[RMDB]
RNA sequence: GGGAACGACUCGAGUAGAGUCGAAAACGAGUUCUUGCUCAGGAGCUUCAGGAUGGUAUCCUUGAUGCUUUCCAGUCACUCACUGACAUGUCGUAUAUAAACAACUUUCUGAAUGAGGCCUUUUAUGCUCAGAUGUAUGAGCAAAGUCCUACACUGCCGUCCAUAGCUAUUUCGAUAGCUAUGGACGAAAAGAAACAACAACAACAAC
Reactivity to DMS in 0.01 (KOAc 150mM, MgCl2 10mM, bicine 150mM(pH8.5), 24C), signal-to-noise 2, nucleotides 027 to 156: c020g040a150g000u000u000c070u020u000g000c060u000c070a050g000g020a060g020c010u010u000c080a110g030g030a050u000g010g020u000a300u000c010c180u020u010g040a070u000g000c000u000u010u000c000c010a170g050u000c300a070c040u010c040a160c040u000g010a050c040a160u020g000u000c050g010u000a080u000a160u000a120a030a050c070a010a150c040u000u000u010c040u000g020a050a130u000g000a050g000g020c020c040u000u040u000u030a110u010g000c000u000c000a050g010a120u000g010u010a100u000g020a000g010c010a050a010a030g000u000c000c050u000a030c020a080c060u000g000c120
Reactivity to 2A3 in 0.01 (KOAc 150mM, MgCl2 10mM, bicine 150mM(pH8.5), 24C), signal-to-noise 5, nucleotides 027 to 156: c030g000a010g060u190u110c030u140u110g030c040u020c020a020g030g000a010g020c030u130u110c070a020g010g000a020u040g040g070u090a060u040c070c090u060u280g010a010u010g010c000u040u010u000c010c010a020g050u040c020a020c030u030c000a210c060u010g020a020c000a060u110g040u070c040g060u080a090u040a030u080a260a140a040c060a070a080c060u080u170u060c070u080g150a180a120u120g020a030g020g000c010c000u040u060u070u120a170u180g010c010u010c010a080g010a180u200g130u220a190u100g050a000g000c000a010a000a000g010u010c010c010u090a110c070a020c060u100g040c050
Structure probing data (DMS and 2A3) for a 207-nucleotide construct. The data come from the RNA Mapping Database (RMDB), library OK3TST. 2A3 adducts were read by reverse transcription with SuperScript II with manganese. The RNA was probed in 150 mM KOAc, 10 mM MgCl2 and 150 mM bicine (pH 8.5) at 24 C.